Structure probing data (DMS and 2A3) for a 177-nucleotide construct. The data come from the RNA Mapping Database (RMDB), library OK2TST. Conditions: 150 mM KOAc, 10 mM MgCl2 and 150 mM bicine (pH 8.5), 24 C.

RNA sequence: GGGAACGACUCGAGUAGAGUCGAAAAUGCACACCACAGCCCUGGCCCGGCUCAAAAAGCAGAUGCCAGAGGAGCAUGGAAGUGAGGACGGGCAAGAUGCACCCAGCAGCGUAUUGCAUGAGCUGGAGCAAGUAUAUGGAUUCGUCCAUAUACUUGCAAAAGAAACAACAACAACAAC
Reactivity to DMS in 0.01 (KOAc 150mM, MgCl2 10mM, bicine 150mM(pH8.5), 24C), signal-to-noise 6, nucleotides 027 to 126: u000g020c030a050c060a140c050c040a070c090a120g000c020c040c010u000g000g010c020c060c040g010g000c010u000c040a030a070a080a130a060g020c050a080g010a060u010g000c010c010a120g000a120g000g010a080g010c030a050u010g000g000a140a100g020u000g000a070g010g010a090c070g010g000g010c020a050a040g010a090u010g010c040a120c080c010c010a060g010c030a130g010c080g000u000a080u000u000g010c040a090u000g010a090g020c000u000g010g000a300
Reactivity to 2A3 in 0.01 (KOAc 150mM, MgCl2 10mM, bicine 150mM(pH8.5), 24C), signal-to-noise 6, nucleotides 027 to 126: u040g000c010a020c010a020c030c040a030c030a040g040c010c010c010u010g040g000c010c010c020g030g010c010u010c020a070a120a040a030a010g060c060a040g030a120u070g010c020c010a040g050a120g150g020a060g010c010a020u060g030g050a110a060g050u030g060a010g010g040a060c030g010g000g010c020a020a020g060a050u100g000c020a050c020c010c000a000g000c000a000g000c020g040u210a120u300u300g040c050a050u130g100a020g040c010u010g010g010a020